[RMDB]
Chemical mapping of a 207-nucleotide RNA with 2A3.
RNA sequence: GGGAACGACUCGAGUAGAGUCGAAAAACGAGGUACGCCUCGAAAUUAUGACCGGUGUCAUAGCCUCUAGCACACAGAGGUCGCGUGGGUUCAACUCCCCCCCUUUUCCGAGGGUAUCGGAAACCAAAAAACACAAUUUGGUUCGCCAAAUUGUGAACUCUAGUUACGCGUUCGCGCGUAACUAGAGAAAAGAAACAACAACAACAAC
Reactivity to 2A3 in 0.01 (KOAc 150mM, MgCl2 10mM, bicine 150mM(pH8.5), 24C), signal-to-noise 2, nucleotides 027 to 156: a000c010g000a010g040g000u060a030c200g040c020c010u000c000g060a020a060a070u080u040a070u140g000a010c030c020g080g030u100g050u050c010a070u030a040g000c000c020u060c010u040a070g040c130a030c010a010c010a160g000a000g060g000u040c020g000c010g100u110g030g050g000u070u120c020a040a050c030u020c010c000c000c010c000c000c010u000u100u000u000c000c000g000a000g000g040g000u060a030u000c000g000g000a010a010a000c030c010a050a030a030a020a050a030c000a000c010a000a000u000u000u000g040g000u010u040c040g050c050c000a000a000a000u000u000g000u000g000a000a020
It was measured as part of the RMDB library M2RFPK.